[RMDB]
RNA sequence: GGGAACGACUCGAGUAGAGUCGAAAAAUGGCGAAUGCAUGGGGAACUACACCUGUGUCGCGAGUUCGAUUCUCGCCAGGGCCUGGUCCUGUAGCUCAGUUGGUAGAGCAAGCUGUUCCCCGGACACAAAAUCCAGCUAGGUUCGCCUAGCUGGAAACGUUUACUCGAUGUUCGCAUCGAGUAAACGAAAAGAAACAACAACAACAAC
Reactivity to 2A3 in 0.01 (KOAc 150mM, MgCl2 10mM, bicine 150mM(pH8.5), 24C), signal-to-noise 2, nucleotides 027 to 156: a040u120g090g030c060g090a110a030u160g010c040a050u080g050g000g030g000a060a030c030u070a030c100a060c090c000u040g030u030g020u140c010g000c000g010a000g000u000u000c020g000a010u030u000c000u000c010g020c000c000a000g010g020g030c040c230u110g080g020u020c000c000u020g020u010a000g000c000u000c020a060g030u150u120g100g140u220a020g010a030g000c000a010a010g040c050u030g000u020u010c000c010c000c030g000g000a060c040a000c030a040a110a000a000u020c000c000a010g010c000u000a000g000g060u060u070c110g050c020c000u000a020g000c010u000g000g000a010a000a000
Reactivity to DMS in 0.01 (KOAc 150mM, MgCl2 10mM, bicine 150mM(pH8.5), 24C), signal-to-noise 2, nucleotides 027 to 156: a070u000g020g000c040g030a090a070u000g040c060a080u000g020g020g000g000a090a060c060u000a140c080a090c070c010u020g050u000g040u010c050g080c020g030a030g030u000u000c070g020a300u000u000c010u000c000g040c010c040a160g020g010g000c030c090u010g060g000u020c020c000u000g010u000a080g010c020u000c010a090g000u020u020g000g020u000a050g010a050g020c000a210a090g000c040u000g010u000u000c000c000c000c000g010g030a070c120a100c050a040a090a060a110u000c000c000a010g020c000u000a030g010g000u000u020c300g030c020c000u000a000g010c000u000g010g000a010a020a040

The data come from the RNA Mapping Database (RMDB), library M2RFPK. This 207-nucleotide RNA was probed chemically with 2A3 and DMS. Conditions: 150 mM KOAc, 10 mM MgCl2 and 150 mM bicine (pH 8.5), 24 C. For 2A3, 1,285 sequencing reads were counted. For DMS, 2,670 sequencing reads were counted. 2A3 adducts were read by reverse transcription with SuperScript II with manganese.